Chemical mapping of a 177-nucleotide RNA with DMS and 2A3. The 2A3 profile rests on 5,739 reads. The RNA was probed in 150 mM KOAc, 10 mM MgCl2 and 150 mM bicine (pH 8.5) at 24 C. Values are in units of 0.01, from 0 to 300, in steps of 10.

[RMDB]
RNA sequence: GGGAACGACUCGAGUAGAGUCGAAAAGUUCUCGAACUGGACCGAUUGUUGCCUGAACAAUAUCAAUCUUCCCAGCUCAGAACGCACUUUCCUUAUCCCGACACCCCGACAAACAGUCCAUUGUCAGCCCUCAGAGUUGAUUCGUCAACUCUGAGGGAAAAGAAACAACAACAACAAC
Reactivity to DMS in 0.01 (KOAc 150mM, MgCl2 10mM, bicine 150mM(pH8.5), 24C), signal-to-noise 2, nucleotides 027 to 126: g020u000u010c000u000c040g050a050a070c020u010g000g060a080c120c120g000a040u000u020g000u000u000g000c070c030u030g000a100a070c300a080a150u050a020u000c060a080a030u000c010u010u000c270c010c000a010g000c000u000c030a120g000a030a000c060g040c200a070c080u010u000u030c040c000u000u000a060u020c010c000c000g000a050c050a060c010c000c000c040g020a060c110a070a040a080c080a080g010u000c070c040a050u000u030g020u000c030a120g050
Reactivity to 2A3 in 0.01 (KOAc 150mM, MgCl2 10mM, bicine 150mM(pH8.5), 24C), signal-to-noise 5, nucleotides 027 to 126: g010u010u010c020u040c080g010a040a010c010u000g000g020a020c020c070g020a040u010u020g020u020u040g030c040c050u060g060a070a030c030a070a020u070a000u160c020a030a020u010c000u070u070c030c020c000a010g000c010u010c010a020g000a030a010c010g010c050a070c020u040u070u050c010c000u020u120a100u050c010c000c020g010a000c010a040c020c010c000c000g020a010c040a010a120a000c010a020g060u020c030c010a050u020u060g040u050c030a050g040